[RMDB]
RNA sequence: GGGAACGACUCGAGUAGAGUCGAAAAGACUGUUCUCAACGACGGGACUGCUUCCAAUGUUGAGAUCCGGCUGAAUCCAACCAAUCAGGGCAAAUUGAGAGUUGUAAAUUUACCACCUGGAUAUGCCAAAUUUAAGAAGAAUUAUGAAACAUUGGGCUCACCAUGUUGAUUUCGAUCAACAUGGUGAAAAAGAAACAACAACAACAAC
Reactivity to 2A3 in 0.01 (KOAc 150mM, MgCl2 10mM, bicine 150mM(pH8.5), 24C), signal-to-noise 2, nucleotides 027 to 156: g050a040c040u030g020u020u010c000u000c010a000a020c010g190a030c010g010g000g060a060c060u170g090c080u240u010c000c000a050a060u100g000u000u010g020a010g010a020u000c030c090g060g000c040u040g040a040a030u020c010c000a000a070c020c020a030a060u100c020a080g050g080g000c040a010a040a080u060u060g060a020g040a060g030u000u020g040u030a100a180a250u110u140u100a020c010c030a000c040c020u020g000g000a020u020a050u130g000c010c000a030a120a010u140u260u150a060a070g020a080a010g040a050a030u140u070a090u230g030a050a060a020c000a020u070u140g020g020g010c030
Reactivity to DMS in 0.01 (KOAc 150mM, MgCl2 10mM, bicine 150mM(pH8.5), 24C), signal-to-noise 2, nucleotides 027 to 156: g000a080c020u010g030u000u020c000u020c010a040a050c030g000a120c210g010g080g030a100c080u000g030c280u000u010c010c020a040a280u000g020u020u000g020a090g010a040u020c020c030g040g020c060u040g000a170a110u020c020c030a120a190c020c050a070a100u000c040a100g030g040g040c030a020a060a050u000u000g010a170g000a100g010u000u010g030u000a100a100a130u020u030u000a040c030c010a070c020c020u000g000g000a100u000a040u010g000c000c010a050a020a110u010u010u030a040a130g010a110a070g010a040a070u000u020a040u010g010a220a040a060c000a090u010u000g010g000g040c130
Record summary
Structure probing data (2A3 and DMS) for a 207-nucleotide construct. Reactivities are given for positions 27 through 156. For 2A3, 910 sequencing reads were counted. For 2A3 the reverse transcriptase was SuperScript II with manganese. It was measured as part of the RMDB library OK3TST.